[RMDB]
RNA sequence: GGGAACGACUCGAGUAGAGUCGAAAAUGGGCUACCAGUAAGCGAAAAAUGAUACAGGACGAAAAAAACAUGAUUCGAGAUUUUUCAGGAUGGAUUUUUUUAGGUAUCUAUCAAAACUAUUCUGAUGCAACGUAGAGCACGUUCGCGUGCUCUACAACAAAGAGCCAUUGUUCGCAAUGGCUCUUUGAAAAGAAACAACAACAACAAC
Reactivity to DMS in 0.01 (KOAc 150mM, MgCl2 10mM, bicine 150mM(pH8.5), 24C), signal-to-noise 1, nucleotides 027 to 156: u010g030g000g020c020u010a100c040c000a100g020u010a080a130g030c030g000a030a110a080a160a130u000g020a210u000a050c010a070g010g000a150c050g040a030a000a040a050a060a070a080c040a010u020g000a150u010u010c020g000a250g020a110u000u010u000u010u000c010a060g000g020a050u000g040g020a040u000u000u000u000u000u000u000a050g000g000u010a040u000c010u000a070u000c040a040a010a040a040c010u000a060u000u000c000u020g000a050u000g000c060a060a080c090g020u010a020g010a000g040c010a000c000g020u000u000c290g040c010g120u000g000c000u000c000u000a000c000a050a120
Reactivity to 2A3 in 0.01 (KOAc 150mM, MgCl2 10mM, bicine 150mM(pH8.5), 24C), signal-to-noise 2, nucleotides 027 to 156: u060g010g010g010c010u020a020c030c000a060g020u120a070a010g030c040g070a110a000a020a020a000u130g040a040u050a110c060a100g070g040a020c060g080a080a020a010a020a000a080a050c060a040u090g030a050u060u070c030g010a020g040a160u100u140u110u050u000c010a010g000g000a000u020g040g010a030u090u020u000u050u000u000u020a020g020g060u140a060u210c000u010a000u040c010a020a000a030a000c020u010a010u020u040c010u010g020a010u010g020c040a120a040c060g000u010a000g000a000g000c000a000c000g000u040u050c120g050c000g090u010g010c000u000c000u000a000c010a000a000